[RMDB]
RNA sequence: GGGAACGACUCGAGUAGAGUCGAAAAGCCGGGUUAAAGACCUCGGGUAUGGUAAAAUCAGCAAAGAUGCAACAAUGGGCAAUCCGCAGCCAAGCUCCUGAAGCCUUAUAGGCAAUGGAGAAGGUUCAGAGACUAAAUGGCAGUGGGCCAACUUGUUCAAUGGAUUUAAGUUCGCUUAAAUCCAUUGAAAAGAAACAACAACAACAAC
Reactivity to 2A3 in 0.01 (KOAc 150mM, MgCl2 10mM, bicine 150mM(pH8.5), 24C), signal-to-noise 2, nucleotides 027 to 156: g060c020c000g000g050g000u060u090a160a110a000g050a070c000c040u070c110g010g000g070u100a030u090g010g030u050a070a100a040a080u100c050a010g060c040a060a110a000g070a030u120g020c050a100a040c010a050a160u060g040g010g020c030a040a070u070c000c010g000c030a020g000c010c010a060a090g020c000u000c000c000u040g010a130a030g020c010c000u230u250a220u160a120g030g000c000a010a010u060g010g000a030g010a020a020g030g010u090u040c010a030g050a010g030a070c030u090a160a060a050u020g030g000c000a010g020u090g000g050g000c020c000a030a040c040u040u050g030u220u000

The record gives the reactivity of an RNA of 207 nucleotides to 2A3. Reactivities are rounded to 0.1 and cut off at 0 and 3. 2A3 adducts were read by reverse transcription with SuperScript II with manganese. The RNA was probed in 150 mM KOAc, 10 mM MgCl2 and 150 mM bicine (pH 8.5) at 24 C.